[RMDB]
RNA sequence: GGGAACGACUCGAGUAGAGUCGAAAAGAUAGCGGACCUUAAUUCGGGGAGUGAAUACUCAUUAACGAAUUGGGAAUUGGCACUCUCAUCGCUUUUGCUGUUGCUGUCACUGCCGGAAAGAAAUUGCCUGAACUAUUCUCUUCGGAGAAUAGUUCAGAAAAGAAACAACAACAACAAC
Reactivity to 2A3 in 0.01 (KOAc 150mM, MgCl2 10mM, bicine 150mM(pH8.5), 24C), signal-to-noise 1, nucleotides 027 to 126: g090a030u060a030g010c050g060g100a030c040c000u140u190a060a000u080u060c050g070g000g040g010a020g000u010g070a070a030u180a150c030u060c030a060u200u160a220a140c070g010a050a030u100u060g030g000g070a030a110u090u080g030g000c000a010c050u060c000u020c030a090u090c050g020c000u130u090u020u090g000c040u120g060u250u200g050c030u010g000u060c010a010c070u010g000c040c020g060g080a030a030a000g040a040a110a080u180u120g000c000
Reactivity to DMS in 0.01 (KOAc 150mM, MgCl2 10mM, bicine 150mM(pH8.5), 24C), signal-to-noise 3, nucleotides 027 to 126: g010a130u010a080g010c030g010g020a160c040c010u000u010a020a040u000u000c030g000g020g000g010a030g000u000g000a150a100u010a080c020u020c000a110u000u020a110a200c030g020a040a020u000u000g010g000g020a130a140u010u000g020g010c030a070c120u000c000u000c030a090u000c070g010c110u000u020u010u010g010c040u000g010u010u000g000c030u010g000u000c030a070c090u010g020c020c020g000g030a040a070a110g010a060a080a100u000u000g010c260
Record summary:
Source: RMDB library OK2TST, as collected in RNAgym. Structure probing data (2A3 and DMS) for a 177-nucleotide construct. For 2A3, 637 sequencing reads were counted. For DMS, 2,651 sequencing reads were counted. Values cover nucleotides 27 to 126. DMS adducts were read by reverse transcription with MarathonRT. DMS (dimethyl sulfate) methylates the pairing face of unpaired adenines and cytosines. Conditions: 150 mM KOAc, 10 mM MgCl2 and 150 mM bicine (pH 8.5), 24 C.